Chemical mapping of a 207-nucleotide RNA with 2A3.
For 2A3 the reverse transcriptase was SuperScript II with manganese.
For 2A3, 864 sequencing reads were counted.
RNA sequence: GGGAACGACUCGAGUAGAGUCGAAAAGGGGUCGCUUUGUCAGGCUCGAGGUAGCUGUUGACGCUCUGAAGCCUCCACGGAGCGAUGGGCUACCCGAGCCUUGGAUUUAAGCGACGGAGGCACCCAAAAGUACUGUGACGUUCGCGUCACAGUACAAGUAUACCUGAACCUUCGGGUUCAGGUAUACAAAAGAAACAACAACAACAAC
Reactivity to 2A3 in 0.01 (KOAc 150mM, MgCl2 10mM, bicine 150mM(pH8.5), 24C), signal-to-noise 1, nucleotides 027 to 156: g060g020g050g030u050c020g020c060u040u090u050g060u020c080a070g040g030c020u000c000g040a260g000g030u010a000g000c010u110g040u300u150g110a040c030g000c000u000c000u050g070a260a060g040c000c030u030c010c010a000c010g030g000a000g000c000g030a020u090g020g120g000c000u010a000c000c000c040g000a010g020c020c000u000u110g010g010a040u130u230u250a020a040g000c010g000a010c000g010g000a020g000g000c040a090c000c000c010a000a170a030a060g010u000a000c000u010g000u000g030a000c000g030u030u120c300g010c000g070u000c000a000c000a000g000u000a000c000a000a000